[RMDB]
RNA sequence: GGGAACGACUCGAGUAGAGUCGAAAAUGCCUCAUUCUAGAGAAUGGGCACUGUUGAUCAUGGUGUCCAAAAAUAGUUAAUGUGGCUAAAUUGAGACAGGUUAUGCUUCCAUCACAGUAUGCAUAUUAAAACGUAUGUAAUUCGUUACAUACGUUUUAAAAGAAACAACAACAACAAC
Reactivity to 2A3 in 0.01 (KOAc 150mM, MgCl2 10mM, bicine 150mM(pH8.5), 24C), signal-to-noise 9, nucleotides 027 to 126: u120g000c000c000u010c010a010u050u020c000u000a010g000a010g020a080a050u010g000g000g010c000a000c000u020g070u090u150g080a160u150c070a040u090g000g000u000g000u000c000c000a000a000a000a010a010u050a010g020u080u150a020a010u020g010u020g000g000c010u030a030a090a130u120u180g070a070g030a050c060a060g050g040u080u040a020u060g010c010u060u000c030c020a100u110c040a040c010a050g100u120a060u120g020c020a030u030a050u080u050
Reactivity to DMS in 0.01 (KOAc 150mM, MgCl2 10mM, bicine 150mM(pH8.5), 24C), signal-to-noise 9, nucleotides 027 to 126: u010g010c000c000u000c010a010u000u000c000u000a010g000a250g010a120a210u000g000g010g000c000a010c000u000g010u000u010g010a130u020c300a030u000g000g020u000g010u000c000c000a000a010a040a150a150u000a010g000u010u030a020a020u000g010u000g000g000c010u000a050a090a110u020u010g010a120g000a090c120a060g000g010u000u010a030u000g000c020u000u010c040c040a080u010c140a070c160a080g010u010a050u000g010c050a040u000a100u000u000